[RMDB]
RNA sequence: GGGAACGACUCGAGUAGAGUCGAAAAGGUGGUGUAGGUGUAGCCGGUGCCCGCCGUGGAACGCAGCUUCACAAUCGGCCGGAUGUCGGUGCGCGCCAUCAGAUCCGCUGCCCCUGGCGACGCAGGCGAAUCACUCGAGGUUCGCCUCGAGUGAUUCAAAAGAAACAACAACAACAAC
Reactivity to DMS in 0.01 (KOAc 150mM, MgCl2 10mM, bicine 150mM(pH8.5), 24C), signal-to-noise 3, nucleotides 027 to 126: g010g030u000g000g010u010g010u000a080g020g030u000g010u000a300g010c020c010g010g030u010g000c070c000c040g020c030c000g040u000g000g010a050a040c040g030c140a080g020c190u000u000c010a080c170a110a110u000c020g000g000c070c070g010g000a050u010g030u010c020g020g010u010g000c080g000c050g000c020c010a060u010c090a100g000a100u010c040c030g000c040u010g000c020c040c030c050u000g000g010c060g000a070c070g020c110a030g010g010c140
Reactivity to 2A3 in 0.01 (KOAc 150mM, MgCl2 10mM, bicine 150mM(pH8.5), 24C), signal-to-noise 1, nucleotides 027 to 126: g020g010u050g020g020u070g080u180a050g090g050u070g030u080a000g030c020c000g000g020u030g020c000c000c000g030c020c000g000u080g020g020a020a000c050g010c300a110g000c170u040u030c040a080c060a250a210u090c020g050g000c110c000g040g000a060u020g010u000c030g000g000u030g030c120g000c010g000c010c010a010u060c010a010g030a030u060c020c030g010c030u050g030c020c020c000c030u040g050g070c040g020a040c080g000c060a020g000g050c050
The record gives the reactivity of an RNA of 177 nucleotides to DMS and 2A3. For 2A3 the reverse transcriptase was SuperScript II with manganese. For DMS, 2,473 sequencing reads were counted. The RNA was probed in 150 mM KOAc, 10 mM MgCl2 and 150 mM bicine (pH 8.5) at 24 C. It was measured as part of the RMDB library OK2TST.